[RMDB]
RNA sequence: GGGAACGACUCGAGUAGAGUCGAAAAACGGUGGAAAUAGUGAUCAUGACUAACGAGCAAGACGACUACGCCGACGAGUGGGAGCAACUCGACCAAAAAGUGAUCCUCGCGCAAAUCCUCACCGAACUGCAACAGAUUCGCCUUGCGCUCACAGACGAUGUACCCUGAAAUUCGUUUCAGGGUACAUAAAAGAAACAACAACAACAAC
Reactivity to 2A3 in 0.01 (KOAc 150mM, MgCl2 10mM, bicine 150mM(pH8.5), 24C), signal-to-noise 4, nucleotides 027 to 156: a000c040g020g010u050g020g040a070a080a090u140a080g080u070g050a110u040c040a030u070g090a100c060u080a110a040c040g000a010g060c030a070a010g050a040c030g030a030c030u050a040c050g030c050c020g020a070c030g000a030g020u030g000g030g010a040g020c020a020a060c020u040c010g070a100c070c030a060a070a000a030a020g020u040g020a020u020c010c040u070c070g010c000g000c010a040a050a080u080c010c010u080c020a040c010c030g020a080a030c020u040g050c040a070a010c020a170g050a240u060u060c000g010c010c010u030u060g020c020g040c020u020c020a090c010a040g120a040c070g000
Reactivity to DMS in 0.01 (KOAc 150mM, MgCl2 10mM, bicine 150mM(pH8.5), 24C), signal-to-noise 2, nucleotides 027 to 156: a060c040g010g050u000g000g000a130a100a130u000a110g000u010g010a070u000c030a060u000g010a170c040u010a100a110c090g000a070g030c060a080a100g020a100c000g040a120c050u080a070c040g000c020c030g000a120c080g000a130g010u020g010g040g020a120g000c040a060a050c040u000c000g000a190c070c040a070a030a020a110a160g000u000g000a080u000c060c030u000c050g000c120g020c070a050a030a070u010c000c030u000c000a050c050c020g010a040a060c050u000g000c040a040a140c060a090g000a170u000u000c040g050c020c050u000u010g030c000g000c020u000c070a040c050a100g010a100c040g010